[RMDB]
RNA sequence: GGGAACGACUCGAGUAGAGUCGAAAAGAUAUGGACCAAAUUGCUUGGAUUUACGGGGUUGUGGUGUGCGUGGGUCGGAAACGACCCAUUAAGCCACAACCCCGUUGUCAGCAAUUGGUCCUAAGUCGUACCCAGAAAAGUUCGCUUUUCUGGGUACAAAAGAAACAACAACAACAAC
Reactivity to DMS in 0.01 (KOAc 150mM, MgCl2 10mM, bicine 150mM(pH8.5), 24C), signal-to-noise 1, nucleotides 027 to 126: g010a120u000a300u020g000g010a010c010c010a000a050a140u000u000g010c000u000u010g040g000a010u000u000u000a000c040g040g000g000g020u010u000g040u000g020g000u000g000u000g050c300g050u000g000g000g020u010c010g000g000a060a110a140c010g010a050c000c000c000a010u010u000a130a300g000c000c000a010c010a010a000c010c000c020c000g000u000u000g000u000c030a010g010c000a010a000u000u000g010g000u000c000c010u000a010a040g000u000c060